[RMDB]
RNA sequence: GGGAACGACUCGAGUAGAGUCGAAAAUGGCUUCUCCUGGGCGAUCGCUCGCUGUUUUUGUGGCUGGCUUUCAGCGGGCAGGAGGAGCCGGGAGCGGAGGCGGAGGACCGAGCCAAAAACGUCAGCCUAUAGAGGAAGCUGUUCGCAGCUUCCUCAAGGUAAGUUUCUGAUUCGUCAGAAACUUACCAAAAGAAACAACAACAACAAC
Reactivity to 2A3 in 0.01 (KOAc 150mM, MgCl2 10mM, bicine 150mM(pH8.5), 24C), signal-to-noise 1, nucleotides 027 to 156: u100g010g000c000u000u000c000u030c010c030u060g070g040g040c100g100a170u140c080g020c050u000c020g000c020u000g030u040u040u010u030u040g100u100g030g000c010u020g000g000c010u000u030u030c010a000g000c010g010g020g000c010a010g000g000a000g000g010a000g000c000c010g010g030g000a040g010c040g030g030a040g010g000c060g010g020a030g020g010a030c020c040g010a010g030c050c040a040a050a000a010a060c060g000u010c000a000g000c000c010u130a170u090a090g010a000g000g010a010a000g000c000u000g020u120u150c270g000c110a000g000c000u010u000c000c000u000c000a000a000
An RNA of 207 nucleotides, treated with 2A3 and read out base by base. The 2A3 profile rests on 1,242 reads. It was measured as part of the RMDB library M2RFPK. The RNA was probed in 150 mM KOAc, 10 mM MgCl2 and 150 mM bicine (pH 8.5) at 24 C. Values cover nucleotides 27 to 156.